[RMDB]
RNA sequence: GGGAACGACUCGAGUAGAGUCGAAAAGAAAGAGCCUGAAUACGGAGAACCGUAACGCAUGACCGAAUAUUCAGCCCAGUUCACGACGUAAGUCGUGCGCCCGAGUCUGUUUCUGGGCGCUGGGGUCACGUACAUGCGUCAGGCAGGAAACAGAGAACAUCACUAAUGCGUUCGCGCAUUAGUGAUGAAAAGAAACAACAACAACAAC
Reactivity to 2A3 in 0.01 (KOAc 150mM, MgCl2 10mM, bicine 150mM(pH8.5), 24C), signal-to-noise 2, nucleotides 027 to 156: g110a020a070a000g040a030g020c000c000u020g030a110a070u070a020c010g010g010a140g120a300a220c020c000g000u010a040a000c010g010c000a000u000g020a030c060c030g110a120a050u200a150u240u230c060a110g040c000c000c000a010g040u140u180c030a000c010g020a010c010g020u100a090a120g020u000c000g000u010g010c020g000c040c000c000g010a020g090u000c040u040g040u050u020u010c030u030g000g000g000c020g000c020u010g000g000g000g070u080c050a010c100g030u070a070c010a000u000g000c000g020u010c000a000g010g000c020a010g040g050a020a020a000c000a010g010a000g040a050a030
Reactivity to DMS in 0.01 (KOAc 150mM, MgCl2 10mM, bicine 150mM(pH8.5), 24C), signal-to-noise 1, nucleotides 027 to 156: g060a040a080a140g000a160g040c080c000u010g010a060a240u000a040c020g010g030a180g010a100a250c020c010g000u000a160a250c000g030c030a030u000g000a190c080c060g030a110a150u010a080u010u000c080a100g030c020c000c010a050g000u000u010c030a080c040g000a000c000g000u010a090a120g000u000c010g040u010g000c000g020c000c010c020g030a070g010u010c030u000g020u000u000u010c040u040g010g010g030c010g000c050u010g040g000g030g010u000c060a040c100g000u000a130c060a030u000g020c010g060u000c010a030g000g010c030a050g000g000a040a050a070c060a090g000a200g000a110a300